[RMDB]
RNA sequence: GGGAACGACUCGAGUAGAGUCGAAAAUAAAAGAAUGAUUGGUACGGAUAGUACGAUGUCUUUUUUCUCGAGAAUGGCAAGGCCAGCGGUACGAACGGUAUUAACCAACUCUGAGGUGGGAGAUGCCCUAGCGGUUGUAGUUCGCUACAACCGCUAGAAAAGAAACAACAACAACAAC
Reactivity to DMS in 0.01 (KOAc 150mM, MgCl2 10mM, bicine 150mM(pH8.5), 24C), signal-to-noise 2, nucleotides 027 to 126: u050a050a030a030a060g010a040a020u000g010a040u000u000g010g010u000a030c000g000g050a200u080a150g010u000a010c020g010a060u020g010u030c020u000u000u000u000u000u000c070u070c040g000a150g020a150a070u050g010g010c040a110a190g010g020c000c020a000g020c080g000g020u000a050c100g000a130a090c090g000g000u000a040u050u000a020a150c080c010a050a160c010u010c060u000g000a040g010g040u020g000g000g000a110g040a070u000g010c050c050
Reactivity to 2A3 in 0.01 (KOAc 150mM, MgCl2 10mM, bicine 150mM(pH8.5), 24C), signal-to-noise 4, nucleotides 027 to 126: u120a000a020a010a030g110a020a050u170g150a050u210u160g170g010u030a030c010g070g160a250u170a250g020u000a000c000g000a000u010g000u000c030u000u000u010u000u020u000c000u000c000g110a140g130a120a180u070g090g000c090a140a020g100g020c040c000a040g000c030g100g000u110a100c020g030a180a020c080g020g000u030a020u090u090a050a010c030c000a030a030c040u070c080u200g050a070g010g010u000g050g010g000a060g040a020u130g020c000c000